[RMDB]
Source: RMDB library 15KREP, as collected in RNAgym. Chemical mapping of a 177-nucleotide RNA with DMS and 2A3. Values are in units of 0.01, from 0 to 300, in steps of 10. For 2A3 the reverse transcriptase was SuperScript II with manganese. Conditions: 150 mM KOAc, 10 mM MgCl2 and 150 mM bicine (pH 8.5), 24 C. The 2A3 profile rests on 2,930 reads.
RNA sequence: GGGAACGACUCGAGUAGAGUCGAAAAACAGACAACUCUGCUAACACUAAAGUUCUUAGGAACAAGGGUGUUGAUUAUACUAAGAAGUUUCUUACAGUUGACGGUGUGCAAUAUUAUUGCUACACGUGGUUAAUAGGUAGUUCGCUACCUAUUAACCAAAAGAAACAACAACAACAAC
Reactivity to DMS in 0.01 (KOAc 150mM, MgCl2 10mM, bicine 150mM(pH8.5), 24C), signal-to-noise 3, nucleotides 027 to 126: a050c050a040g020a120c100a100a090c130u010c040u000g010c030u000a030a020c010a010c010u010a060a110a300g010u000u010c000u000u010a130g010g000a010a010c010a070a180g000g000g000u000g010u000u000g010a080u000u000a070u000a090c080u000a040a060g000a050a220g020u000u000u000c000u000u000a110c130a100g010u000u000g020a110c080g010g000u000g000u010g000c010a010a020u010a130u000u010a070u000u010g010c000u000a010c000a030c000g010u000
Reactivity to 2A3 in 0.01 (KOAc 150mM, MgCl2 10mM, bicine 150mM(pH8.5), 24C), signal-to-noise 3, nucleotides 027 to 126: a000c030a000g060a020c040a050a050c080u030c020u130g040c040u030a010a000c000a010c020u060a040a100a070g010u010u000c010u040u100a160g100g010a000a010c010a020a050g260g000g000u030g040u020u000g010a010u010u180a100u040a100c070u070a070a060g040a110a010g060u040u030u000c020u040u080a090c060a090g020u060u040g140a040c060g060g030u020g010u000g020c020a010a020u080a100u300u100a030u060u060g010c010u080a000c020a000c030g030u010